Structure probing data (DMS and 2A3) for a 177-nucleotide construct. Conditions: 150 mM KOAc, 10 mM MgCl2 and 150 mM bicine (pH 8.5), 24 C.
RNA sequence: GGGAACGACUCGAGUAGAGUCGAAAAGAGAAAAAGAAAAGGACCACUCCUGCGGGAGUUAAGGCAAUACGGACAGCCGGGUCCAGUGCCGAAAAAGAAAAAGAAAAAGAAAAAGAAAAAGAAAGAAGUCAUUAUAUGGUUUCGACCAUAUAAUGACAAAAGAAACAACAACAACAAC
Reactivity to DMS in 0.01 (KOAc 150mM, MgCl2 10mM, bicine 150mM(pH8.5), 24C), signal-to-noise 2, nucleotides 027 to 126: g010a300g010a080a080a070a140a110g000a110a040a150a180g020g000a010c000c010a070c020u000c010c010u010g050c130g050g040g000a030g040u000u040a060a020g010g000c000a040a060u020a100c070g000g000a030c070a120g000c000c000g000g010g000u000c000c000a050g000u070g010c000c000g020a140a050a030a040a090g040a080a030a030a020a100g000a040a060a030a110a120g000a010a060a050a040a070g000a070a080a040a050a120g030a050a050a100g030a060a130
Reactivity to 2A3 in 0.01 (KOAc 150mM, MgCl2 10mM, bicine 150mM(pH8.5), 24C), signal-to-noise 2, nucleotides 027 to 126: g060a010g000a000a040a000a010a010g140a030a100a010a030g010g010a000c000c000a000c000u010c000c000u020g010c200g050g010g030a010g010u050u070a030a030g010g000c010a050a000u140a100c040g020g010a020c000a010g010c000c000g030g010g000u000c010c000a000g000u000g000c000c010g110a140a010a000a000a000g100a020a060a000a010a010g080a050a090a000a050a000g060a030a070a050a070a020g110a000a050a070a000a000g090a060a070a020g080a070a010
The 2A3 profile rests on 1,373 reads.